[RMDB]
RNA sequence: GGGAACGACUCGAGUAGAGUCGAAAAACUGAGAAGGCCAUUACCGACUUACAGUUCGAUUUGGCUACAGCCGAAGUUACGGUCUCCUUCACCAAACACUUUGCUUUCAACUUUGGUCAGGUAGUCCCUGAAAACAGUUAUUCGUAACUGUUUUCAGAAAAGAAACAACAACAACAAC
Reactivity to 2A3 in 0.01 (KOAc 150mM, MgCl2 10mM, bicine 150mM(pH8.5), 24C), signal-to-noise 9, nucleotides 027 to 126: a000c070u090g010a070g040a170a070g050g000c020c010a020u030u070a070c040c030g020a020c020u100u180a100c110a100g030u080u050c020g030a060u030u020u070g000g000c010u050a040c030a030g030c020c020g040a040a010g030u050u080a060c060g010g040u020c040u040c020c000u080u080c040a050c030c010a040a080a020c050a010c080u070u100u150g040c030u050u150u160c050a050a060c040u030u040u050g040g030u050c020a020g000g060u030a020g040u040c030c000
Reactivity to DMS in 0.01 (KOAc 150mM, MgCl2 10mM, bicine 150mM(pH8.5), 24C), signal-to-noise 9, nucleotides 027 to 126: a100c040u010g000a140g010a120a130g010g010c030c030a040u000u010a070c080c010g010a060c030u000u010a130c220a130g010u000u000c030g000a110u000u000u000g010g000c000u010a070c120a120g000c050c020g010a050a040g010u000u000a120c160g000g010u000c050u000c040c040u000u000c070a090c050c040a050a070a100c160a040c100u000u000u000g010c120u000u000u000c100a040a050c060u000u000u000g000g000u000c050a040g010g010u000a090g000u000c010c070